[RMDB]
Structure probing data (DMS and 2A3) for a 207-nucleotide construct. For DMS, 5,027 sequencing reads were counted. DMS adducts were read by reverse transcription with MarathonRT. The 2A3 profile rests on 8,296 reads.

RNA sequence: GGGAACGACUCGAGUAGAGUCGAAAAUCCUAAGUCGAAUGACAUGGUUGUUUGGAGAGCGCAGAUAUACAUCGGAAACGAUGUAUGUAGCUCUCCAUCAACCAACAGCAUUCGAUAUGGAAAAAGUGUAACUUUAGCUUCGGCUAAAGUUACACAACAAUGAAACAACGUUCGCGUUGUUUCAUUGAAAAGAAACAACAACAACAAC
Reactivity to DMS in 0.01 (KOAc 150mM, MgCl2 10mM, bicine 150mM(pH8.5), 24C), signal-to-noise 3, nucleotides 027 to 156: u020c010c000u000a060a220g000u020c000g010a030a010u000g010a060c050a300u000g010g010u010u000g040u010u000u000g010g010a020g000a020g000c010g020c160a240g000a090u020a040u000a000c000a010u010c000g030g000a200a100a300c010g020a010u000g000u000a000u000g020u000a230g010c010u000c000u000c010c000a000u000c010a020a020c000c000a010a040c040a210g070c030a100u010u000c000g010a010u000a250u020g000g010a050a100a120a130a150g000u000g010u000a000a000c000u000u000u000a000g030c010u010u010c300g020g010c000u000a000a010a010g010u000u010a010c000a000c000a000a150
Reactivity to 2A3 in 0.01 (KOAc 150mM, MgCl2 10mM, bicine 150mM(pH8.5), 24C), signal-to-noise 5, nucleotides 027 to 156: u040c000c000u030a080a040g020u010c000g010a000a010u040g030a200c060a100u030g000g000u020u010g040u200u090u100g030g000a010g000a000g000c050g010c130a030g090a100u090a010u000a100c000a010u000c000g040g030a090a060a050c010g010a000u030g000u030a030u020g000u010a020g000c010u000c000u000c000c000a000u000c000a000a000c000c000a000a000c000a000g000c000a010u000u000c000g000a000u010a090u130g070g060a060a070a030a070a080g000u010g000u000a000a000c000u010u000u000a010g010c010u030u050c300g020g000c000u000a000a000a000g000u000u010a000c000a000c000a000a000